Structure probing data (2A3 and DMS) for a 177-nucleotide construct. The DMS profile rests on 1,031 reads.
RNA sequence: GGGAACGACUCGAGUAGAGUCGAAAAGAUAUGGACCUACCGCUUGAUGACCUACCAAUCCCUCGGAAACGAGAACUUGGUAGCAAGAGCCGUAGGUCCUAAGUCAAAACACUCGUUCGCGAGUGAACGACUGUAGUUGGUUCGCCAACUACAGUCGAAAAGAAACAACAACAACAAC
Reactivity to 2A3 in 0.01 (KOAc 150mM, MgCl2 10mM, bicine 150mM(pH8.5), 24C), signal-to-noise 1, nucleotides 027 to 126: g010a020u050a050u050g010g010a000c010c000u000a010c000c030g080c000u120u040g040a160u090g070a300c040c000u010a000c010c000a030a010u150c090c030c020u000c020g000g010a060a020a040c000g030a000g030a040a040c010u020u010g000g000u000a000g020c000a160a190g000a000g030c020c020g020u000a000g000g000u000c000c000u000a000a000g010u000c000a000a000a010a120c000a000c000u000c010g040u080u080c280g030c010g150a000g020u000g020a070a030
Reactivity to DMS in 0.01 (KOAc 150mM, MgCl2 10mM, bicine 150mM(pH8.5), 24C), signal-to-noise 2, nucleotides 027 to 126: g010a010u000a280u000g000g000a010c030c000u000a000c020c230g000c000u000u000g000a080u020g000a050c300c020u000a020c000c000a000a060u000c080c120c010u000c000g000g030a070a020a090c030g030a000g010a060a020c300u000u010g010g000u000a000g010c010a040a030g000a000g040c020c180g000u000a000g010g000u000c000c000u000a000a020g020u000c010a180a030a040a150c020a010c000u000c000g010u000u020c260g020c030g000a010g020u000g010a060a150